[RMDB]
RNA sequence: GGGAACGACUCGAGUAGAGUCGAAAAUCUGACACUUGUGAUUGAUGGGUUGACCGCAGCAAUUUUCUGGUCUCUGAUUUGGUAAUUUAAGUGAAGAAUGUCCAUCAGAAGCCUGGCUUCACUGUGGAGUACCGUAUCGAUUCGUCGAUACGGUACUAAAAGAAACAACAACAACAAC
Reactivity to 2A3 in 0.01 (KOAc 150mM, MgCl2 10mM, bicine 150mM(pH8.5), 24C), signal-to-noise 5, nucleotides 027 to 126: u020c010u060g060a010c010a030c070u130u180g090u070g090a200u090u030g040a060u150g030g020g000u120u030g010a020c000c000g000c050a050g020c020a090a100u080u040u090u050c050u050g060g010u020c010u020c010u040g050a070u040u080u210g050g010u060a140a230u070u030u090a150a190g080u120g070a080a040g060a080a040u150g080u060c000c000a020u020c030a020g030a030a000g020c010c020u050g030g030c010u030u030c040a030c020u040g020u050g050g030
Reactivity to DMS in 0.01 (KOAc 150mM, MgCl2 10mM, bicine 150mM(pH8.5), 24C), signal-to-noise 2, nucleotides 027 to 126: u010c010u000g000a160c080a070c060u000u010g010u000g010a080u010u020g000a100u000g000g010g030u020u000g010a060c040c010g000c030a030g010c140a060a030u020u020u050u000c080u000g000g000u000c080u010c040u000g000a020u020u030u000g020g010u020a060a060u010u000u020a060a130g000u030g010a150a110g010a010a060u030g000u000c000c020a040u000c050a040g030a080a120g000c030c020u000g000g000c110u000u000c010a060c020u000g000u000g030g000
Description: Chemical mapping of a 177-nucleotide RNA with 2A3 and DMS. Conditions: 150 mM KOAc, 10 mM MgCl2 and 150 mM bicine (pH 8.5), 24 C. For DMS the reverse transcriptase was MarathonRT.